[RMDB]
RNA sequence: GGGAACGACUCGAGUAGAGUCGAAAAAUGAAUGCCAGCAGGCACCCCUCCUUUCCUGGGGUAAAGGUUUUCAGAUGCUGCAUCUUCUAAAUUGAGCCUCCGGUCAUACUAGUUUUGUGCUUGGAACGUUAAUGUAAUGAUUCGUCAUUACAUUAACAAAAGAAACAACAACAACAAC
Reactivity to DMS in 0.01 (KOAc 150mM, MgCl2 10mM, bicine 150mM(pH8.5), 24C), signal-to-noise 9, nucleotides 027 to 126: a090u000g010a110a080u000g010c030c010a100g030c150a080g010g010c050a080c020c020c010c010u000c030c040u000u000u000c020c020u000g010g000g000g010u010a030a080a120g010g010u000u000u010u000c070a060g000a080u000g010c080u010g020c040a040u000c030u000u000c040u000a030a050a090u000u000g000a260g010c020c010u000c030c030g010g000u000c050a050u000a060c090u000a070g000u000u000u000u010g020u000g010c050u000u000g010g010a090a100c200
Reactivity to 2A3 in 0.01 (KOAc 150mM, MgCl2 10mM, bicine 150mM(pH8.5), 24C), signal-to-noise 7, nucleotides 027 to 126: a010u100g050a060a020u050g040c040c010a020g090c050a060g190g000c010a020c000c000c000c000u020c010c010u030u050u040c010c010u050g010g010g000g000u040a070a060a030g060g000u030u040u060u100c040a030g010a110u060g020c070u060g030c040a030u000c010u180u010c020u060a100a160a160u070u100g030a020g030c000c000u000c010c010g030g000u030c010a020u050a140c030u040a080g100u050u090u140u170g060u040g010c010u040u040g040g020a070a040c060